Chemical mapping of a 177-nucleotide RNA with DMS and 2A3. In probing experiments dimethyl sulfate is read out at A N1 and C N3, which are open when not base-paired. The data come from the RNA Mapping Database (RMDB), library OK2TST. The reactions ran in a buffer of 150 mM KOAc, 10 mM MgCl2 and 150 mM bicine (pH 8.5), at 24 C. Values are in units of 0.01, from 0 to 300, in steps of 10. Reactivities are given for positions 27 through 126.
[RMDB]
RNA sequence: GGGAACGACUCGAGUAGAGUCGAAAAUGAGGCUCCUUUUCCUGAAGAGAAUAUCAUCGACGCAAAGACUAGAAAUGAGCAAACUACCAUCCAAACUGAAAAAGUUCGUCCUACUCCCGGUGAGGUAGACUAUAUCAGUCUUCGGACUGAUAUAGUCAAAAGAAACAACAACAACAAC
Reactivity to DMS in 0.01 (KOAc 150mM, MgCl2 10mM, bicine 150mM(pH8.5), 24C), signal-to-noise 4, nucleotides 027 to 126: u010g000a130g000g020c020u010c020c030u000u000u010u010c020c020u000g000a130a100g010a110g020a110a120u000a050u010c040a050u000c010g010a100c100g010c100a050a090a080g000a070c080u010a050g000a060a070a090u000g010a090g000c030a060a060a100c050u000a060c040c030a050u000c040c070a040a070a060c050u000g000a050a060a080a140a060g010u010u000c060g000u000c010c010u000a100c050u000c000c030c020g030g010u010g010a080g010g010u000a110
Reactivity to 2A3 in 0.01 (KOAc 150mM, MgCl2 10mM, bicine 150mM(pH8.5), 24C), signal-to-noise 4, nucleotides 027 to 126: u130g000a040g030g020c010u050c000c000u020u050u070u050c010c010u050g030a120a020g060a020g000a100a060u060a040u130c050a020u060c060g050a040c030g000c050a090a060a040g040a060c030u050a050g060a070a120a050u130g000a040g030c000a020a050a050c030u060a050c010c000a020u030c010c010a080a090a090c030u090g030a120a120a020a010a010g050u040u040c020g040u010c020c010u040a110c020u040c020c020c020g000g050u110g010a040g070g000u070a070